[RMDB]
RNA sequence: GGGAACGACUCGAGUAGAGUCGAAAAAAAAGAUAUGGACAUAUGCAUGGCUAUCAGGUCAUCGAUCUUCUUUCGGAAACGAAAGAAGGGAGACCUAGUAGUCUGUGAUGUAUGUCCUAAGUCAAAACUUUAGCUAUCUCUUCGGAGAUAGCUAAAGAAAAGAAACAACAACAACAAC
Reactivity to 2A3 in 0.01 (KOAc 150mM, MgCl2 10mM, bicine 150mM(pH8.5), 24C), signal-to-noise 1, nucleotides 027 to 126: a000a000a000a000g100a050u130a100u180g000g000a000c000a020u010a020u060g100c040a010u050g010g000c010u040a010u080c090a010g040g000u010c020a240u300c250g110a100u050c030u040u000c010u000u000u020c000g000g030a090a040a030c020g010a010a000a000g000a000a000g000g000g010a020g000a000c000c000u000a010g010u000a000g060u020c110u050g010u020g030a300u060g010u020a010u010g020u000c010c010u030a200a000g020u030c020a010a010a150a190
Reactivity to DMS in 0.01 (KOAc 150mM, MgCl2 10mM, bicine 150mM(pH8.5), 24C), signal-to-noise 1, nucleotides 027 to 126: a050a020a020a010g010a050u000a300u000g010g010a070c000a010u000a030u000g000c010a050u000g010g010c010u000a000u000c070a010g020g010u000c010a240u040c110g000a070u000c030u000u000c000u000u010u010c010g020g000a090a040a220c010g010a000a030a000g000a000a000g010g000g010a050g010a000c020c000u000a070g000u000a000g020u000c030u000g040u000g010a110u010g050u000a030u000g010u010c000c000u030a040a100g010u010c040a070a060a120a120
Record summary:
Source: RMDB library TTRDES, as collected in RNAgym. An RNA of 177 nucleotides, treated with 2A3 and DMS and read out base by base. Values are in units of 0.01, from 0 to 300, in steps of 10. Conditions: 150 mM KOAc, 10 mM MgCl2 and 150 mM bicine (pH 8.5), 24 C. The DMS profile rests on 1,156 reads. The 2A3 profile rests on 1,635 reads.